[RMDB]
Structure probing data (DMS and 2A3) for a 177-nucleotide construct. Source: RMDB library OK2TST, as collected in RNAgym. The RNA was probed in 150 mM KOAc, 10 mM MgCl2 and 150 mM bicine (pH 8.5) at 24 C. The 2A3 profile rests on 14,681 reads.
RNA sequence: GGGAACGACUCGAGUAGAGUCGAAAAGCACCUGGAAGUGCGGCACCAGCGGAGCGGGCGUGGGGACCACCUGGACCGGAGGGUUGUCCUCUGACAGGCCUGGCACGGAGGAGGGCCCACCGAGUGGGCCUGGUACACAGUUCGCUGUGUACCAGGCAAAAGAAACAACAACAACAAC
Reactivity to DMS in 0.01 (KOAc 150mM, MgCl2 10mM, bicine 150mM(pH8.5), 24C), signal-to-noise 9, nucleotides 027 to 126: g010c070a060c020c030u010g010g010a140a100g020u000g010c060g020g010c070a090c040c030a100g010c070g020g000a120g020c050g000g010g010c060g010u000g010g010g000g010a100c050c050a060c030c030u000g010g010a150c110c040g000g000a150g010g010g010u000u000g000u010c000c010u000c020u000g000a100c130a110g000g000c040c040u000g000g020c070a140c040g000g000a080g000g000a080g010g000g010c010c000c010a060c030c040g010a120g010u000g010g010
Reactivity to 2A3 in 0.01 (KOAc 150mM, MgCl2 10mM, bicine 150mM(pH8.5), 24C), signal-to-noise 5, nucleotides 027 to 126: g010c010a020c040c030u040g080g100a140a040g050u040g040c010g030g000c030a040c050c020a020g040c030g040g020a100g030c060g000g020g010c060g030u070g000g000g000g020a020c010c020a020c020c020u060g030g070a100c020c040g030g030a040g040g020g000u040u040g130u100c010c000u000c010u010g040a050c040a090g060g060c010c050u100g070g000c050a010c040g030g010a030g020g010a020g010g020g000c000c010c010a010c010c030g040a050g050u080g020g090